[RMDB]
RNA sequence: GGGAACGACUCGAGUAGAGUCGAAAAGGCAGGUCAUAAUAAACACGCUAGCUAGUGAACUUAGUUCAGUAAGGAGAGAUGGUGAAAGAGAUAGUCUAACCGACCUGAUUGACUAUGUCAACUCACCUCAUCUGUUGCCGUUCGCGGCAACAGAUGAAAAAGAAACAACAACAACAAC
Reactivity to 2A3 in 0.01 (KOAc 150mM, MgCl2 10mM, bicine 150mM(pH8.5), 24C), signal-to-noise 1, nucleotides 027 to 126: g040g010c020a010g020g010u020c050a020u020a300a010u110a030a220a040c030a010c060g000c000u010a020g000c010u010a020g130u010g150a060a010c000u060u140a060g000u000u060c040a010g060u060a180a040g070g030a130g020a000g000a040u150g040g000u020g080a070a070a050g010a000g000a010u010a000g000u070c000u010a030a030c030c060g010a060c020c010u040g020a030u000u040g000a000c030u000a000u060g180u050c000a020a070c000u010c010a010c000c010
Reactivity to DMS in 0.01 (KOAc 150mM, MgCl2 10mM, bicine 150mM(pH8.5), 24C), signal-to-noise 1, nucleotides 027 to 126: g030g050c010a010g000g000u020c000a180u000a080a080u020a120a070a070c130a050c090g000c040u010a070g010c010u010a090g020u030g000a060a050c120u020u000a040g030u000u000c100a140g020u000a100a090g000g010a060g010a110g000a120u000g010g010u010g000a010a060a300g010a050g010a050u000a020g010u000c000u000a020a070c120c030g000a090c160c050u000g010a190u000u000g000a020c010u000a030u010g000u000c010a020a140c300u000c010a030c020c030